[RMDB]
RNA sequence: GGGAACGACUCGAGUAGAGUCGAAAAGGUGGACUUCGGUCCACCAGAAUUACUUCGGUAAUUCAGCAAUACUUCGGUAUUGCACGAAGGCUACGGCCUUCGACGUAUACGUACGCGUAUACGAAGACCUUACUUCGGUAAGGUCACCUGUGCCGGUGACGGCACAGGACCUAUACGUGAGUAUAGGAACUAGAUACUUCGGUAUCUAGAACCGCCUGAUUAGCGGUCUACAAGUUAAUCGAUACCGGUUACGUACGCGUAACCGGAAGGCGUGGUUCGCCACGCCUAAAAGAAACAACAACAACAAC
Reactivity to 2A3 in 0.01 (KOAc 150mM, MgCl2 10mM, bicine 150mM(pH8.5), 24C), signal-to-noise 7, nucleotides 027 to 266: g000g000u000g000g010a000c020u060u120c300g100g000u000c010c000a000c000c000a000g000a000a000u000u000a000c010u010u030c150g090g000u010a000a010u000u010c040a030g000c000a000a000u010a010c010u030u040c150g110g000u000a000u000u010g000c010a010c070g000a000a000g000g000c020u030a030c260g130g000c000c000u000u000c000g020a010c010g000u000a010u000a000c000g020u010a020c300g020c000g120u000a000u000a000c010g020a120a040g010a000c000c000u000u010a000c010u010u050c190g110g000u000a000a010g000g000u000c000a030c000c010u000g000u000g000c010c000g020g040u050g030a030c000g000g000c000a000c000a000g000g000a000c000c000u000a000u000a010c040g080u080g200a080g020u010a000u010a000g000g000a000a020c000u000a000g000a010u000a000c010u030u060c220g100g000u000a000u000c000u000a000g010a010a010c000c000g010c010c000u020g000a010u030u170a010g000c000g010g040u030c030u060a220c280a070a000g040u090u210a170a000u010c010g000a020u110a110c010c010g000g000u010u000a000c000g020u030a030c280g040c010g140u000a010a000c000c000g000g010a000
Reactivity to DMS in 0.01 (KOAc 150mM, MgCl2 10mM, bicine 150mM(pH8.5), 24C), signal-to-noise 2, nucleotides 027 to 266: g000g020u000g000g020a040c000u000u020c160g000g000u010c010c000a000c000c010a020g010a020a000u000u000a000c010u000u030c090g020g000u000a000a000u010u000c010a240g000c000a000a000u000a000c000u000u020c140g040g000u010a000u030u010g010c000a140c110g010a010a010g020g000c020u000a130c140g050g010c000c000u010u010c010g000a300c030g010u000a000u000a000c000g000u010a090c210g000c060g040u000a000u000a000c020g000a130a140g000a010c000c000u000u000a000c010u010u020c140g040g010u000a010a000g000g010u000c020a010c010c000u000g000u000g000c000c010g000g000u010g020a160c030g000g000c010a010c010a000g000g020a070c020c000u010a010u000a000c000g000u010g000a180g000u010a000u010a010g000g000a230a150c000u000a010g000a040u000a000c000u000u020c150g010g020u030a000u000c000u000a010g000a300a020c000c020g020c000c000u010g040a030u000u000a260g000c000g000g000u000c160u010a010c140a000a010g000u000u000a010a020u010c010g000a290u020a150c010c010g020g000u000u010a020c000g010u000a080c200g040c000g010u010a010a000c000c000g000g000a040
The record gives the reactivity of an RNA of 307 nucleotides to 2A3 and DMS. For DMS the reverse transcriptase was MarathonRT. The 2A3 profile rests on 16,293 reads.